[RMDB]
RNA sequence: GGGAACGACUCGAGUAGAGUCGAAAAGGUUCGACAGUAAGGCUCAGUGCGAAGACGUCAUGCUAAGAGCGAUUGAUAAGAUGUGGGAGCGGCACCAAUUGGUCGUCCAGGCCGUUUGCACGCCUUACCCUUUACCCCAAUUCGUUGGGGUAAAGGGAAAAGAAACAACAACAACAAC
Reactivity to DMS in 0.01 (KOAc 150mM, MgCl2 10mM, bicine 150mM(pH8.5), 24C), signal-to-noise 3, nucleotides 027 to 126: g030g030u000u000c040g000a110c140a110g020u000a040a060g010g020c070u000c140a120g010u010g010c040g010a100a100g020a060c170g010u000c050a070u010g000c040u030a100a130g000a070g000c030g020a100u000u010g020a080u000a050a050g000a090u000g020u010g010g000g010a060g020c010g010g000c020a190c100c040a080a110u020u000g010g000u000c090g010u010c050c050a120g030g010c000c000g000u000u000u000g000c090a040c010g000c020c010u010u000a100
Reactivity to 2A3 in 0.01 (KOAc 150mM, MgCl2 10mM, bicine 150mM(pH8.5), 24C), signal-to-noise 2, nucleotides 027 to 126: g040g000u060u050c010g060a040c090a070g020u060a070a010g030g010c020u030c140a000g020u020g060c080g070a110a040g070a040c040g040u030c030a030u110g010c030u100a160a010g030a050g120c070g020a060u010u090g000a020u040a140a100g080a120u140g020u090g020g080g000a030g020c010g050g000c020a040c050c010a070a170u060u150g040g020u080c030g010u010c050c030a020g020g010c000c010g000u000u010u060g060c030a020c000g000c000c010u010u040a050